[RMDB]
This 177-nucleotide RNA was probed chemically with 2A3 and DMS. The data come from the RNA Mapping Database (RMDB), library OK2TRN. For DMS, 3,237 sequencing reads were counted. For 2A3, 1,115 sequencing reads were counted. For DMS the reverse transcriptase was MarathonRT. In probing experiments dimethyl sulfate is read out at A N1 and C N3, which are open when not base-paired.
RNA sequence: GGGAACGACUCGAGUAGAGUCGAAAAUGUGAGCCAACUCUUUUAGGUGAUCUUGCACGCUAUGAAUAUGGGUUGGAUAGCUCUCCAACGGUGUUUUUUCAGUCACCAGCUGCGCAGUGCCGAGAGCCAAAAGCGAAUGCUUCGGCAUUCGCUUUUGAAAAGAAACAACAACAACAAC
Reactivity to 2A3 in 0.01 (KOAc 150mM, MgCl2 10mM, bicine 150mM(pH8.5), 24C), signal-to-noise 2, nucleotides 027 to 126: u170g030u050g000a000g050c000c000a000a010c010u000c000u020u050u010u130a020g000g050u030g060a150u110c110u130u300g070c020a000c060g180c040u060a040u120g060a070a080u230a110u300g030g000g000u020u020g000g000a040u080a030g000c000u000c010u000c030c020a070a080c030g000g020u020g000u070u170u050u060u160u140c010a060g020u050c020a050c050c000a040g000c030u080g010c080g020c080a060g090u000g090c020c050g070a040g000a000g080c020
Reactivity to DMS in 0.01 (KOAc 150mM, MgCl2 10mM, bicine 150mM(pH8.5), 24C), signal-to-noise 3, nucleotides 027 to 126: u000g040u010g000a130g000c020c010a040a030c010u000c000u000u000u010u000a060g000g020u000g010a070u000c140u010u010g000c040a050c040g010c020u000a040u000g010a190a060u010a060u010g000g010g000u010u010g010g010a080u000a120g010c040u000c020u000c010c060a100a070c090g030g020u000g020u000u000u010u000u000u000c120a100g010u000c020a100c070c060a160g010c030u000g020c070g020c120a070g010u000g010c080c080g020a030g000a070g020c040